[RMDB]
RNA sequence: GGGAACGACUCGAGUAGAGUCGAAAACAACUGACCCAUUUUGUCAUGGCGCAAGGAGACAACGUAAUCAUCAACCUCAUCAUCCCUGUCGAGGUGGACCGGGUGGGUGGGGUUGUCGAAGGAGAACUGUGUUCACCCCAUUCGUGGGGUGAACACAAAAAGAAACAACAACAACAAC
Reactivity to 2A3 in 0.01 (KOAc 150mM, MgCl2 10mM, bicine 150mM(pH8.5), 24C), signal-to-noise 1, nucleotides 027 to 126: c170a030a000c090u100g200a110c000c010c010a020u160u070u000u030g040u110c000a010u080g060g000c080g000c060a040a170g020g020a000g000a010c000a020a080c230g170u240a220a000u040c120a000u040c000a000a000c020c000u020c000a140u000c010a090u000c130c000c000u040g020u070c150g000a030g110g000u080g030g030a010c000c020g000g050g000u210g200g050g000u200g000g000g000g000u000u020g000u000c000g020a030a010g100g180a030g000a030a030c110
The data come from the RNA Mapping Database (RMDB), library OK1LIB. Chemical mapping of a 177-nucleotide RNA with 2A3. Conditions: 150 mM KOAc, 10 mM MgCl2 and 150 mM bicine (pH 8.5), 24 C.